Conditions: 150 mM KOAc, 10 mM MgCl2 and 150 mM bicine (pH 8.5), 24 C. Structure probing data (2A3 and DMS) for a 177-nucleotide construct. For DMS, 1,948 sequencing reads were counted. It was measured as part of the RMDB library RFMREP.
[RMDB]
RNA sequence: GGGAACGACUCGAGUAGAGUCGAAAAGCCCUUUGUACACACCGCCCGUCGCACCUACCGAUUGGAUAUUGUGACGAACCUUGCAGAGUGAGUUCUAUUCAGCAAUGGAUAGUAUUUACGAAGUCAUAGAGUUAGUUAUGUUCGCAUAACUAACUCUAAAAGAAACAACAACAACAAC
Reactivity to 2A3 in 0.01 (KOAc 150mM, MgCl2 10mM, bicine 150mM(pH8.5), 24C), signal-to-noise 3, nucleotides 027 to 126: g000c000c000c000u030u040u080g060u050a040c020a010c000a000c010c030g000c030c010c010g000u010c000g000c020a070c000c040u140a110c030c030g150a150u040u210g000g000a040u060a050u110u120g010u020g020a010c030g020a030a070c020c040u050u130g000c030a010g020a020g070u020g000a000g000u000u010c000u000a010u000u010c000a000g000c010a050a050u020g000g010a000u000a010g010u010a020u000u020u000a020c020g040a040a010g080u070c010a080u050
Reactivity to DMS in 0.01 (KOAc 150mM, MgCl2 10mM, bicine 150mM(pH8.5), 24C), signal-to-noise 3, nucleotides 027 to 126: g020c020c010c020u000u000u000g020u000a060c030a060c040a060c110c030g000c020c040c020g020u000c030g050c090a070c070c070u010a140c160c040g000a070u000u020g030g010a090u010a130u000u010g010u000g000a080c040g020a070a120c100c100u000u000g030c040a030g000a300g010u000g000a020g010u000u000c000u010a010u000u000c000a000g010c300a100a110u000g010g000a000u010a000g010u000a020u000u000u000a030c040g000a220a200g000u000c150a110u000